[RMDB]
RNA sequence: GGGAACGACUCGAGUAGAGUCGAAAAGUUCCAAGGUUAACUUGGAUCCUGAAUCUAGGUUAUCCCCUAAAUCUGCCCUGUAUCCUGUAUCUACAGAUUGUACUGCCAUGCAAUACAGGACUGAAAUAUUAAACUAAAUCAACACACAUGGAAAAGAGUGGACCUGAUUAUUCGUAAUCAGGUCCACAAAAGAAACAACAACAACAAC
Reactivity to 2A3 in 0.01 (KOAc 150mM, MgCl2 10mM, bicine 150mM(pH8.5), 24C), signal-to-noise 1, nucleotides 027 to 156: g050u030u040c000c000a040a060g030g000u100u180a070a000c000u000u010g000g000a000u070c000c030u120g210a160a030u030c010u030a010g000g000u010u130a110u190c000c000c000c010u070a060a130a080u080c030u020g040c020c020c020u000g000u000a080u000c010c010u030g000u000a110u080c090u130a040c000a110g030a250u180u160g050u120a080c000u010g000c030c030a090u000g010c070a020a020u000a000c000a030g000g000a030c020u030g050a050a050a000u120a000u090u190a080a080a000c040u080a070a020a270u010c090a030a030c120a000c050a000c010a040u110g110g120a130a160a000a000g130a070